[RMDB]
RNA sequence: GGGAACGACUCGAGUAGAGUCGAAAACUAUGAUUCGUCAUAGAUGAUUCCUAAGUCAAGCGCUUGAAAAAAUUUGCAUCGAUCGCUUCGGAAACGAAGCGGGAGCAACCGCAGCUAGAACUACGCUUGAUAUGGACAUAUAAUCCUUCGGGAUUAAAGGUAGCAUAGGUUUCGACCUAUGCUACCUAAAAGAAACAACAACAACAAC
Reactivity to 2A3 in 0.01 (KOAc 150mM, MgCl2 10mM, bicine 150mM(pH8.5), 24C), signal-to-noise 2, nucleotides 027 to 156: c000u000a000u010g020a030u120u150c230g030u000c050a000u050a000g030a050u050g050a080u110u130c000c000u040a160a060g040u000c000a010a010g050c090g080c250u200u220g280a160a060a050a100a110a260u130u120u130g020c030a090u150c050g110a030u060c000g000c020u000u000c000g000g000a050a050a000c000g000a010a000g000c010g000g020g000a040g000c030a050a090c040c170g070c080a050g020c050u110a050g050a210a030c080u090a010c040g000c000u000u020g000a010u020a060u110g040g030a000c050a050u220a020u060a100a040u070c030c010u020u110c200g130g000g010a000u040u060a150a060